Structure probing data (2A3 and DMS) for a 207-nucleotide construct. DMS adducts were read by reverse transcription with MarathonRT.
RNA sequence: GGGAACGACUCGAGUAGAGUCGAAAAUCUGCCUGAUUUGGCUUGUCAUCAUUUGCCCAGGCCAUUGAAUUAAUAGUGAUGUCCAACCCUGAAAAGGGAGCCAAAAUUUAGAAUUGUAAGGGCAAAGCAGGAAAGGAGAGUAAAAUAUAGAAAUGUAGCUAAUUUACCAGUUCGCUGGUAAAUUAGCAAAAGAAACAACAACAACAAC
Reactivity to 2A3 in 0.01 (KOAc 150mM, MgCl2 10mM, bicine 150mM(pH8.5), 24C), signal-to-noise 2, nucleotides 027 to 156: u000c000u020g060c060c030u080g050a110u080u030u080g010g000c000u030u040g050u000c020a030u000c020a020u040u030u120g020c020c020c020a030g040g040c000c030a050u060u070g090a160a050u100u070a140a100u080a150g060u020g060a010u020g030u010c040c020a070a060c020c010c000u050g050a050a040a020a030g050g000g000a010g000c010c000a030a090a000a070u110u190u120a110g060a140a070u090u040g060u090a040a050g000g000g000c000a070a020a000g010c020a000g070g000a060a000a000g030g000a030g010a000g020u090a030a080a130a110u260a070u080a040g040a040a080a090u250g020u210a020
Reactivity to DMS in 0.01 (KOAc 150mM, MgCl2 10mM, bicine 150mM(pH8.5), 24C), signal-to-noise 1, nucleotides 027 to 156: u020c090u000g040c030c020u000g020a140u020u000u020g000g000c000u020u000g030u030c050a040u010c130a090u000u010u000g020c030c040c010a140g000g080c020c070a130u000u000g010a100a130u000u000a120a150u020a110g070u000g020a050u000g010u020c010c000a050a180c000c000c000u010g000a070a050a150a060g000g020g000a090g010c000c030a030a020a070a070u010u000u020a130g030a130a080u010u040g020u000a190a130g010g000g020c020a050a030a080g020c060a070g000g000a030a040a020g020g040a050g020a090g020u000a020a100a030a060u000a110u000a130g010a030a080a040u000g020u000a170
The 2A3 profile rests on 984 reads.
The reactions ran in a buffer of 150 mM KOAc, 10 mM MgCl2 and 150 mM bicine (pH 8.5), at 24 C.
Values cover nucleotides 27 to 156.